[RMDB]
RNA sequence: GGGAACGACUCGAGUAGAGUCGAAAAAUCAUUCUACGUCCUAUGGAUGUGCAACUCUUAGCCGAAGCGUAUGAGUAUAGAGCACUAUUUCUAAAUCCCAUCAGUCCAUACACCGAGUUGGCUACUAUCUUGUACGUAUAUUGCAUGGAAUCAUAGACUAAACUGUGACGUUCGCGUCACAGUUUAGAAAAGAAACAACAACAACAAC
Reactivity to 2A3 in 0.01 (KOAc 150mM, MgCl2 10mM, bicine 150mM(pH8.5), 24C), signal-to-noise 4, nucleotides 027 to 156: a000u080c020a040u090u090c060u100a080c040g080u060c020c010u070a050u130g040g030a100u110g030u020g040c030a030a050c040u020c020u120u120a030g030c040c040g090a110a020g000c000g000u000a000u070g000a000g020u130a000u020a030g000a010g020c030a060c130u110a080u020u110u010c100u080a140a160a080u030c010c020c010a080u120c050a040g130u030c060c040a080u070a130c070a040c070c030g040a020g080u100u080g090g020c000u130a150c010u000a120u000c000u000u010g000u020a000c010g030u080a100u020a020u230u030g010c020a030u050g030g100a100a070u140c020a050u070a070g060a050
Reactivity to DMS in 0.01 (KOAc 150mM, MgCl2 10mM, bicine 150mM(pH8.5), 24C), signal-to-noise 1, nucleotides 027 to 156: a120u000c060a080u000u030c020u000a140c080g010u000c010c000u000a020u030g020g000a040u010g000u000g030c010a100a030c010u000c040u030u000a160g020c030c050g030a060a170g010c000g010u000a020u010g000a020g020u010a050u010a030g010a130g020c060a110c060u000a130u000u000u000c070u010a030a120a080u000c000c000c010a210u000c070a060g000u000c020c070a050u000a030c050a080c040c040g010a130g000u000u000g010g000c030u000a060c010u000a060u000c040u000u000g030u000a040c000g000u000a100u000a080u000u000g010c060a100u000g010g010a110a190u000c000a100u000a080g000a300
The record gives the reactivity of an RNA of 207 nucleotides to 2A3 and DMS. The RNA was probed in 150 mM KOAc, 10 mM MgCl2 and 150 mM bicine (pH 8.5) at 24 C. 2A3 adducts were read by reverse transcription with SuperScript II with manganese. High 2A3 reactivity points to a flexible backbone, as in loops and unpaired stretches.